[RMDB]
RNA sequence: GGGAACGACUCGAGUAGAGUCGAAAAUUGGAGAUGCCAGGAACUGCAGAACCCCAAAGAGGGGGGUCAUAGCCCUGGCUUAGGGAACUCCUGAGUCUGGACUCCCCGAAGGGCCACAUCUCUUCACGUUCUAUAUGGGUUUCGACCCAUAUAGAACAAAAGAAACAACAACAACAAC
Reactivity to DMS in 0.01 (KOAc 150mM, MgCl2 10mM, bicine 150mM(pH8.5), 24C), signal-to-noise 4, nucleotides 027 to 126: u000u000g010g020a050g010a040u000g010c040c090a120g000g010a090a090c070u000g000c150a150g010a110a190c040c020c000c040a050a080a170g010a250g010g020g000g000g020g000u000c040a080u000a090g000c070c070c010u000g000g000c010u000u010a010g020g010g000a150a150c260u010c000c000u000g000a020g010u000c010u000g010g000a040c010u000c010c000c000c030g000a140a060g000g000g010c030c050a110c090a010u000c020u000c010u000u010c120a130c210
Reactivity to 2A3 in 0.01 (KOAc 150mM, MgCl2 10mM, bicine 150mM(pH8.5), 24C), signal-to-noise 3, nucleotides 027 to 126: u090u070g020g000a040g020a020u020g050c060c050a100g090g000a110a070c070u140g020c040a040g080a210a120c020c010c030c020a050a170a000g160a100g020g000g000g010g020g010u020c020a060u170a140g040c020c000c010u000g000g020c000u000u000a010g010g010g040a120a100c030u060c070c010u000g020a000g000u000c020u060g080g000a000c000u020c010c000c000c000g010a030a030g030g000g020c030c000a030c000a020u020c030u010c000u030u090c090a080c080
About this RNA
Structure probing data (DMS and 2A3) for a 177-nucleotide construct. The data come from the RNA Mapping Database (RMDB), library OK2TST. The reactions ran in a buffer of 150 mM KOAc, 10 mM MgCl2 and 150 mM bicine (pH 8.5), at 24 C. The 2A3 profile rests on 3,398 reads.